[RMDB]
RNA sequence: GGGAACGACUCGAGUAGAGUCGAAAAAUCUGACAAGCGUUUAGUUCGGAUGAGCCGCGCCAUCGUUAAAAACGCGGAAGCCAACUGGUGGGAGUAAAAUACCAUCUGGGGGCUAAAAGGCUCGUAAGACGUUCUGUAAGUUCGCUUACAGAACGUCAAAAGAAACAACAACAACAAC
Reactivity to 2A3 in 0.01 (KOAc 150mM, MgCl2 10mM, bicine 150mM(pH8.5), 24C), signal-to-noise 1, nucleotides 027 to 126: a000u070c030u020g010a030c040a080a040g090c030g040u060u150u250a160g040u200u040c030g020g020a010u010g010a070g010c010c020g020c000g000c000c010a110u150c060g030u070u130a000a190a000a000a000c020g000c000g000g000a000a000g020c000c000a030a010c000u000g010g000u000g020g040g010a170g060u100a000a060a040a000u170a050c000c000a000u000c000u000g110g000g000g000g000c000u000a000a080a000a000g000g000c000u000c000g040u030a030a010
Reactivity to DMS in 0.01 (KOAc 150mM, MgCl2 10mM, bicine 150mM(pH8.5), 24C), signal-to-noise 2, nucleotides 027 to 126: a010u010c020u030g000a060c060a080a120g000c190g020u010u020u040a130g000u010u000c140g000g060a060u000g000a040g010c000c000g050c130g000c030c050a080u020c030g000u010u030a050a090a040a030a080c010g000c300g000g090a100a070g010c000c000a000a050c000u000g000g020u000g010g000g000a050g010u000a030a070a080a120u020a130c010c000a000u000c000u000g000g000g000g000g010c000u000a000a000a040a030g000g000c010u010c000g000u030a060a020
Structure probing data (2A3 and DMS) for a 177-nucleotide construct. The RNA was probed in 150 mM KOAc, 10 mM MgCl2 and 150 mM bicine (pH 8.5) at 24 C. High DMS reactivity at an A or C suggests that its Watson-Crick edge is free. For 2A3, 656 sequencing reads were counted. Reactivities are given for positions 27 through 126. It was measured as part of the RMDB library RFM100.